[RMDB]
The data come from the RNA Mapping Database (RMDB), library TTRINS. Chemical mapping of a 177-nucleotide RNA with DMS. The reactions ran in a buffer of 150 mM KOAc, 10 mM MgCl2 and 150 mM bicine (pH 8.5), at 24 C.

RNA sequence: GGGAACGACUCGAGUAGAGUCGAAAAGAUAUGGAGCUAAGGGAGCGUGAGCCUUGUGGACGAAUUAUAUCGGAAACGAUAUAACUAUCCACAAGGCUUAAACGCUUUGAUCUUAGCUCCUAAGUCAGUAAGAUACCUUGUUCGCAAGGUAUCUUACAAAAGAAACAACAACAACAAC
Reactivity to DMS in 0.01 (KOAc 150mM, MgCl2 10mM, bicine 150mM(pH8.5), 24C), signal-to-noise 3, nucleotides 027 to 126: g000a080u020a300u000g000g010a030g020c000u010a000a020g000g000g000a010g030c000g040u000g000a030g000c000c000u000u010g010u000g000g000a020c110g000a050a070u000u000a010u000a010u010c000g000g000a120a110a270c000g010a010u000a000u000a000a020c090u010a280u000c000c000a000c000a010a000g010g030c000u000u000a010a070a040c010g020c000u000u000u010g000a060u010c000u020u000a010g000c000u000c000c000u000a020a060g010u000c060a180